[RMDB]
RNA sequence: GGGAACGACUCGAGUAGAGUCGAAAAGAUAUGGAAUGACUCAGCUUUUGACGGCUUCUGUGUCGGAAACGACACAGGGCCGAUAAGCUGACAUUCCUAAGUCAAAACCGUUCGUUCGCGAACGGAACCUGUUGCUAUUCUUCGGAAUAGCAACAGGAAAAGAAACAACAACAACAAC
Reactivity to 2A3 in 0.01 (KOAc 150mM, MgCl2 10mM, bicine 150mM(pH8.5), 24C), signal-to-noise 3, nucleotides 027 to 126: g000a000u060a010u140g000g020a020a000u000g160a170c070u000c040a010g020c010u190u180u230u300g300a270c160g000g000c020u300u220c010u210g000u000g010u000c000g000g040a080a060a050c000g010a020c000a000c000a000g010g020g000c010c000g000a000u020a000a000g030c000u000g000a000c010a000u000u000c000c000u000a080a010g070u050c010a010a020a150a260c010c020g010u000u000c020g000u030u080c300g000c000g170a000a000c000g000g000a000a010
Reactivity to DMS in 0.01 (KOAc 150mM, MgCl2 10mM, bicine 150mM(pH8.5), 24C), signal-to-noise 1, nucleotides 027 to 126: g030a050u000a300u020g000g000a020a000u000g000a170c300u000c020a000g050c000u000u000u010u000g020a160c180g000g000c000u000u010c000u010g000u000g020u000c010g030g000a080a060a210c010g000a020c000a010c000a050g000g000g010c000c010g010a030u010a010a030g040c000u000g020a050c000a000u000u000c010c010u000a010a080g000u000c030a080a060a020a130c000c010g020u000u000c000g010u000u020c300g030c000g000a010a000c000g000g000a020a050
Source: RMDB library TTRDES, as collected in RNAgym. An RNA of 177 nucleotides, treated with 2A3 and DMS and read out base by base. Reactivities are given for positions 27 through 126. 2A3 adducts were read by reverse transcription with SuperScript II with manganese. Conditions: 150 mM KOAc, 10 mM MgCl2 and 150 mM bicine (pH 8.5), 24 C.